[RMDB]
RNA sequence: GGGAACGACUCGAGUAGAGUCGAAAAAGCAAUUGCAGCGUCGAGGUCGAGUUGGACGAACUUGUCCAGGUGGGUAUCUAUACACAUCAGUUGGAACCCCGUUGAUGUAUAAACUUGACCCAGAUUCCCUGUGUCCCUCCUUCGGGAGGGACACAGGAAAAGAAACAACAACAACAAC
Reactivity to 2A3 in 0.01 (KOAc 150mM, MgCl2 10mM, bicine 150mM(pH8.5), 24C), signal-to-noise 1, nucleotides 027 to 126: a000g150c010a010a020u240u080g000c020a070g050c000g070u050c000g050a000g000g070u000c030g050a010g000u050u000g080g000a080c030g000a190a110c070u300u300g000u000c000c000a000g240g000u170g060g060g000u020a270u270c000u000a120u020a230c070a000c000a080u050c040a010g010u040u100g000g000a080a080c000c000c000c010g080u000u120g130a130u040g080u110a190u070a090a020a020c000u000u010g000a000c000c040c000a000g000a000u040u110c020
Overview: Conditions: 150 mM KOAc, 10 mM MgCl2 and 150 mM bicine (pH 8.5), 24 C. The record gives the reactivity of an RNA of 177 nucleotides to 2A3. Reactivities are given for positions 27 through 126. It was measured as part of the RMDB library OK1LIB.